RNA sequence: GGGAACGACUCGAGUAGAGUCGAAAAGCAGGUCGCAGUGACUAGGGGGGAGCGACUGUUUACUAAAAACACAGGGGGCUGCAAUCCGGCAACGGUUUGUACAGCCCCUGAGUCCUGCCCAGUGCGGCCUUACUCGUGUAUUCGUACACGAGUAAGGAAAAGAAACAACAACAACAAC
Reactivity to DMS in 0.01 (KOAc 150mM, MgCl2 10mM, bicine 150mM(pH8.5), 24C), signal-to-noise 8, nucleotides 027 to 126: g020c070a030g010g010u000c010g020c010a090g010u020g020a120c060u000a150g010g000g010g020g000g010a080g020c110g010a060c100u000g010u010u000u010a110c170u040a040a070a050a060a030c050a120c100a190g000g000g000g000g010c000u000g000c000a020a000u000c000c000g000g010c300a090a140c000g000g000u010u000u000g000u010a090c030a020g010c010c000c000c000u000g000a040g000u000c010c020u000g000c010c010c020a060g010u010g000c020g000g010
Reactivity to 2A3 in 0.01 (KOAc 150mM, MgCl2 10mM, bicine 150mM(pH8.5), 24C), signal-to-noise 4, nucleotides 027 to 126: g030c030a000g060g090u040c030g000c020a040g060u070g200a130c080u160a200g030g000g000g000g020g010a080g030c040g040a020c010u000g010u000u010u030a100c040u060a030a060a080a000a000c030a000c010a030g000g000g000g030g000c010u010g000c000a000a000u020c000c000g000g000c010a050a060c000g010g000u010u000u010g010u050a040c020a000g000c000c000c000c000u000g000a000g010u000c010c010u040g070c010c000c000a030g030u060g020c030g010g040